The data come from the RNA Mapping Database (RMDB), library M2RFPK. This 207-nucleotide RNA was probed chemically with 2A3. 2A3 adducts were read by reverse transcription with SuperScript II with manganese. Reactivities are given for positions 27 through 156. The RNA was probed in 150 mM KOAc, 10 mM MgCl2 and 150 mM bicine (pH 8.5) at 24 C.

[RMDB]
RNA sequence: GGGAACGACUCGAGUAGAGUCGAAAACGAGUGCAAUAAAGACGCGGUUGCCGAUCGGUAUGGAUGCCACCGUGACGGCUCAAUCACACAAGUGCCAACGAUAGCGAGGCGCUCGCUAUUGCUGCGUAAAAGCGACGAUCGUUCGCGAUCGUCGCAACUCCAGCAUUCUCUUCGGAGAAUGCUGGAGAAAAGAAACAACAACAACAAC
Reactivity to 2A3 in 0.01 (KOAc 150mM, MgCl2 10mM, bicine 150mM(pH8.5), 24C), signal-to-noise 1, nucleotides 027 to 156: c030g010a060g020u050g100c050a030a120u110a190a190a050g050a000c010g000c020g060g000u000u020g000c010c020g080a040u050c030g040g120u230a080u110g070g060a020u120g030c000c000a030c000c000g030u050g060a070c010g000g000c000u010c030a020a060u120c010a000c000a000c000a040a180g030u020g050c030c000a020a020c040g010a010u000a000g000c020g000a010g280g110c130g140c070u000c020g000c000u000a020u020u000g020c020u000g010c010g070u050a090a150a000a060g030c000g000a000c000g010a000u020c000g000u050u150c170g010c070g090a000u010c000g000u020c000g000c000a000a000